[RMDB]
RNA sequence: GGGAACGACUCGAGUAGAGUCGAAAAAGAGGCAAGGGCGUCUUGGCGGUGCCGAUUAGCAAUCGAGAGAUUUUGAUUGGCCCUACCUCCGAGGUGAUCGAUGACUUUGAUGAUGUUACGACCACGAGAAUGGAACCGACUUCGGUCGGUUCCAUUCAAAAGAAACAACAACAACAAC
Reactivity to DMS in 0.01 (KOAc 150mM, MgCl2 10mM, bicine 150mM(pH8.5), 24C), signal-to-noise 1, nucleotides 027 to 126: a040g000a080g020g010c070a060a080g020g020g050c010g000u000c050u000u010g010g040c100g040g000u000g040c010c020g000a030u000u010a100g030c190a030a040u020c000g000a300g010a130g000a060u000u000u000u000g000a060u010u000g030g000c010c150c020u000a050c010c000u000c020c020g000a090g050g010u000g000a030u000c060g000a130u000g000a050c000u000u010u000g000a100u000g020a090u010g020u010u010a040c000g010a070c010c010a060c050g000a130
This 177-nucleotide RNA was probed chemically with DMS. Reactivities are rounded to 0.1 and cut off at 0 and 3. For DMS the reverse transcriptase was MarathonRT.